An RNA of 177 nucleotides, treated with 2A3 and DMS and read out base by base. For DMS, 4,251 sequencing reads were counted. The data come from the RNA Mapping Database (RMDB), library OK2TRN. For 2A3, 6,103 sequencing reads were counted. Conditions: 150 mM KOAc, 10 mM MgCl2 and 150 mM bicine (pH 8.5), 24 C.

RNA sequence: GGGAACGACUCGAGUAGAGUCGAAAACUAUCUCAGGAGAGACGUCGUAGGAAUAGGCCUUGAUGAGGGUAUGGGCCACGGUCCUCCCGAGUCCCAGGACCCGUUCCACAUAGUCCUCGAACCGGGCCAUGUCCAUGAGUUUCGACUCAUGGACAUGAAAAGAAACAACAACAACAAC
Reactivity to 2A3 in 0.01 (KOAc 150mM, MgCl2 10mM, bicine 150mM(pH8.5), 24C), signal-to-noise 4, nucleotides 027 to 126: c020u040a060u150c040u010c080a070g050g090a040g010a010g000a020c020g030u100c040g030u090a180g000g030a040a040u020a050g020g000c000c000u030u040g010a040u030g020a040g050g010g000u160a180u240g010g000g000c020c020a030c070g060g010u010c000c020u020c010c010c000g010a010g020u020c040c040c020a040g110g040a300c000c000c020g010u030u010c020c000a010c010a000u090a020g020u010c000c030u010c010g040a060a020c020c030g050g000g000c030
Reactivity to DMS in 0.01 (KOAc 150mM, MgCl2 10mM, bicine 150mM(pH8.5), 24C), signal-to-noise 5, nucleotides 027 to 126: c140u010a080u010c020u010c020a160g010g010a280g000a060g020a000c070g020u010c160g000u010a120g040g000a070a050u000a070g010g010c010c000u000u000g000a080u000g010a300g010g010g010u000a020u010g030g000g000c050c030a040c250g050g020u000c010c020u000c010c010c010g010a270g000u010c030c170c140a060g000g010a070c030c020c030g020u010u000c010c010a030c020a080u000a130g010u010c050c010u010c020g010a070a150c120c060g010g000g000c280